Notes
Structure probing data (2A3 and DMS) for a 177-nucleotide construct.

RNA sequence: GGGAACGACUCGAGUAGAGUCGAAAAGUCGCCCGCGUCGUUCAGGGCGACCGUGGUGAUGCCCUGCGCGGCGAGCACGUCGCCGUAGUUGGUUCGCGACAGGCGCUCCUCGAUAGCUGCGGAGAUCGAAUACAUAGUCAUUCGUGACUAUGUAUUCAAAAGAAACAACAACAACAAC
Reactivity to 2A3 in 0.01 (KOAc 150mM, MgCl2 10mM, bicine 150mM(pH8.5), 24C), signal-to-noise 9, nucleotides 027 to 126: g070u050c030g040c010c010c000g020c040g040u040c020g010u040u080c040a060g020g050g000c010g010a010c000c010g070u130g040g040u100g020a100u160g010c000c000c000u020g020c030g000c000g010g000c010g010a020g020c070a030c120g100u060c010g010c030c020g030u030a080g040u050u100g080g020u090u090c040g000c020g060a080c050a050g070g010c020g000c010u020c000c000u050c020g080a100u100a130g030c040u050g010c040g020g030a050g010a100u160c100
Reactivity to DMS in 0.01 (KOAc 150mM, MgCl2 10mM, bicine 150mM(pH8.5), 24C), signal-to-noise 8, nucleotides 027 to 126: g000u010c060g010c000c000c020g000c110g010u000c030g010u000u010c080a120g010g000g010c000g000a020c020c060g030u030g000g010u020g020a090u010g010c020c010c010u010g010c060g000c010g000g020c010g000a060g010c100a080c100g000u000c020g010c010c030g020u020a060g000u000u010g010g010u000u010c040g010c040g000a060c080a070g020g000c050g010c020u010c020c010u010c080g010a110u030a100g010c040u010g000c040g000g000a100g000a060u030c110
Reactivities are given for positions 27 through 126.